[RMDB]
RNA sequence: GGGAACGACUCGAGUAGAGUCGAAAAGACUGCGUGCACUCGAGACGAUAUCGAGCCGGAAAUUAAUCGAUAAUGUCUCAUGUAGUGGAUACGAUCCGGCAAGUAUCGACUACCUGUGCUCGUAGGACAUAAUCCUGGAUUUCGAUCCAGGAUUAUGAAAAGAAACAACAACAACAAC
Reactivity to 2A3 in 0.01 (KOAc 150mM, MgCl2 10mM, bicine 150mM(pH8.5), 24C), signal-to-noise 9, nucleotides 027 to 126: g060a010c000u000g000c000g000u010g010c000a000c010u030c040g000a000g000a010c010g010a010u010a000u070c010g000a010g000c010c000g020g080a070a160a090u300u220a100a180u190c000g010a010u030a070a080u160g020u000c010u010c020a080u200g030u060a030g010u030g140g000a000u000a020c000g010a030u020c000c000g000g000c030a040a010g000u000a000u020c040g060a010c000u050a130c000c070u060g000u000g000c000u010c010g000u000a000g000g010a000
Reactivity to DMS in 0.01 (KOAc 150mM, MgCl2 10mM, bicine 150mM(pH8.5), 24C), signal-to-noise 5, nucleotides 027 to 126: g020a160c000u000g010c000g010u010g000c000a010c010u010c300g000a000g000a030c000g000a110u000a000u000c010g010a090g000c000c000g000g010a090a130a130u030u040a070a120u000c010g010a030u000a010a080u020g010u010c000u020c000a130u040g000u000a020g010u020g010g000a010u020a010c000g000a100u010c000c000g000g000c030a100a130g000u000a000u000c000g000a020c000u010a010c000c300u020g000u000g000c000u000c000g000u000a000g000g010a160

The record gives the reactivity of an RNA of 177 nucleotides to 2A3 and DMS. The RNA was probed in 150 mM KOAc, 10 mM MgCl2 and 150 mM bicine (pH 8.5) at 24 C. For DMS, 13,839 sequencing reads were counted. It was measured as part of the RMDB library OK1LIB.